Chemical mapping of a 207-nucleotide RNA with 2A3.
[RMDB]
RNA sequence: GGGAACGACUCGAGUAGAGUCGAAAAGAUGGAGGGUCAGGCCUCGGACUCCUCCUAUAAGAUGUAACUAUUACGAGGCCAUUAAUGGCGUUUUCGCCUAGGUGCACGACGGCGUGCGUGGCACCGUAAGACUUAAUGAAUAACACGCCGGAUACAAGCGUAUAUGGUGAUUCGUCACCAUAUACGCAAAAGAAACAACAACAACAAC
Reactivity to 2A3 in 0.01 (KOAc 150mM, MgCl2 10mM, bicine 150mM(pH8.5), 24C), signal-to-noise 2, nucleotides 027 to 156: g100a050u070g000g000a000g000g090g040u010c050a000g000g030c000c010u030c030g000g000a040c130u130c000c000u000c000c000u040a050u010a020a070g120a080u100g090u150a010a100c050u080a160u200u020a070c010g010a000g000g000c000c000a000u000u080a000a050u060g050g000c020g070u140u020u210u190c000g020c020c000u000a090g000g000u000g020c000a000c000g020a000c000g040g010c000g000u010g040c000g000u010g040g040c000a000c010c000g010u000a020a030g020a000c000u050u140a060a030u170g180a090a050u030a030a020c000a020c020g000c020c020g000g000a010u010a030c040a110a020

Conditions: 150 mM KOAc, 10 mM MgCl2 and 150 mM bicine (pH 8.5), 24 C. The 2A3 profile rests on 905 reads.